[RMDB]
RNA sequence: GGGAACGACUCGAGUAGAGUCGAAAAUGGCCCGUAACUCGGCGCCGCCGAAAAGGGAAGCCGGUUAAUAUUCCGGCACCGCUGCCCGCUGCCUUUAUGGCACCCGACGCCUCGGGAUAGGCCGGGCAUUAGGCUUCCAUUUCGAUGGAAGCCUAAUAAAAGAAACAACAACAACAAC
Reactivity to 2A3 in 0.01 (KOAc 150mM, MgCl2 10mM, bicine 150mM(pH8.5), 24C), signal-to-noise 2, nucleotides 027 to 126: u070g050g050c010c000c020g000u110a080a070c000u020c060g010g010c080g080c030c050g040c000c010g090a080a080a030a030g040g000g020a120a010g010c030c030g020g010u010u050a150a050u030a050u120u110c010c010g000g000c000a010c010c000g070c050u040g020c000c000c000g000c030u080g000c000c020u070u150u180a110u250g020g000c000a010c000c000c010g040a080c040g200c000c080u070c000g030g000g000a020u060a030g000g000c030c030g000g010g000c000
Reactivity to DMS in 0.01 (KOAc 150mM, MgCl2 10mM, bicine 150mM(pH8.5), 24C), signal-to-noise 2, nucleotides 027 to 126: u060g020g000c020c010c040g000u060a140a160c240u010c000g000g000c050g060c040c050g010c050c000g000a030a030a030a110g000g000g000a160a120g030c010c000g080g000u030u060a110a070u020a200u030u010c010c010g000g040c000a020c080c000g000c110u020g000c000c000c020g000c040u030g010c000c020u010u010u020a080u020g000g010c150a170c000c010c030g010a060c180g010c170c170u010c020g000g000g040a100u030a060g000g020c180c010g010g000g000c010

Source: RMDB library RFM100, as collected in RNAgym.
Structure probing data (2A3 and DMS) for a 177-nucleotide construct.
The reactions ran in a buffer of 150 mM KOAc, 10 mM MgCl2 and 150 mM bicine (pH 8.5), at 24 C.
For 2A3, 941 sequencing reads were counted.